[RMDB]
RNA sequence: GGGAACGACUCGAGUAGAGUCGAAAAGAUAUGGACCUGACGAGACAUGCGUGUCGGAAACGACCACGCAACAGCUCGUAGGUCCUAAGUCAAAAGCGUACCGUAUACUUCGGUAUACGGUACGCAACUCAACUAAACGCUUCGGCGUUUAGUUGAGAAAAGAAACAACAACAACAAC
Reactivity to 2A3 in 0.01 (KOAc 150mM, MgCl2 10mM, bicine 150mM(pH8.5), 24C), signal-to-noise 1, nucleotides 027 to 126: g030a010u040a020u130g000g010a000c000c030u040g280a060c000g010a000g000a060c020a090u060g000c000g000u020g000u000c010g000g080a030a020a020c000g000a030c090c130a000c050g020c010a010a040c090a030g020c010u010c010g010u000a010g000g000u020c000c010u010a010a020g020u010c040a050a040a130a050g000c000g000u020a000c000c000g000u010a020u010a000c000u000u070c280g060g000u010a000u010a010c020g020g000u000a000c010g000c000a000a000
Reactivity to DMS in 0.01 (KOAc 150mM, MgCl2 10mM, bicine 150mM(pH8.5), 24C), signal-to-noise 2, nucleotides 027 to 126: g000a030u000a300u010g000g000a010c000c000u000g020a010c000g000a010g000a080c100a190u000g000c000g040u010g010u000c000g010g010a060a040a150c010g000a030c250c100a020c000g060c010a000a010c240a140g000c000u000c000g000u000a010g000g000u000c000c010u000a000a050g010u010c050a050a060a140a170g000c010g000u000a020c000c000g000u000a000u000a000c000u000u030c160g010g000u000a000u000a000c000g000g000u000a000c000g020c000a000a060